The record gives the reactivity of an RNA of 207 nucleotides to DMS and 2A3. The RNA was probed in 150 mM KOAc, 10 mM MgCl2 and 150 mM bicine (pH 8.5) at 24 C. 2A3 adducts were read by reverse transcription with SuperScript II with manganese.
RNA sequence: GGGAACGACUCGAGUAGAGUCGAAAAUAAAGUCGGAGAGAAGAUCUUCGAAGCUGGCGUCGAAAAGGGUGUUCUGUACAAGCAGAAUGCUCAGGGCGUCUACGACAAGGGCUAUGCCUGGAAUGGCUUGUCCGCCGUCAACGAAUCGCCUUCGGGCGGUACUACGCCUGUUCGCAGGCGUAGUACCAAAAGAAACAACAACAACAAC
Reactivity to DMS in 0.01 (KOAc 150mM, MgCl2 10mM, bicine 150mM(pH8.5), 24C), signal-to-noise 2, nucleotides 027 to 156: u010a060a090a110g010u000c000g040g000a050g050a050g040a170a060g010a120u000c010u030u000c040g040a050a120g010c090u000g020g000c050g040u000c010g010a090a070a100a230g000g030g050u010g020u010u000c000u000g000u000a170c300a160a230g010c000a060g000a040a010u000g020c080u000c000a080g030g010g000c000g010u000c000u000a030c080g020a100c030a050a160g060g020g010c000u010a050u010g010c000c000u000g000g020a170a200u000g020g010c030u000u000g020u000c000c030g020c020c010g000u000c060a130a110c080g000a080a040u010c090g020c040c010u020u000c040g010g020g020c220
Reactivity to 2A3 in 0.01 (KOAc 150mM, MgCl2 10mM, bicine 150mM(pH8.5), 24C), signal-to-noise 3, nucleotides 027 to 156: u160a030a080a000g090u030c020g020g000a010g000a000g030a200a150g090a150u010c000u000u000c010g010a000a010g070c100u080g030g010c030g010u020c050g060a090a080a180a180g010g010g000u030g000u010u010c010u000g040u050a160c030a110a100g040c000a010g000a010a000u010g000c000u000c000a010g050g000g000c010g020u010c050u060a060c090g030a010c020a070a070g010g000g000c030u070a010u220g000c010c010u010g050g040a100a070u090g040g000c000u000u050g000u000c000c010g000c050c030g050u030c020a010a050c070g060a080a080u150c040g010c000c000u050u050c160g020g030g010c020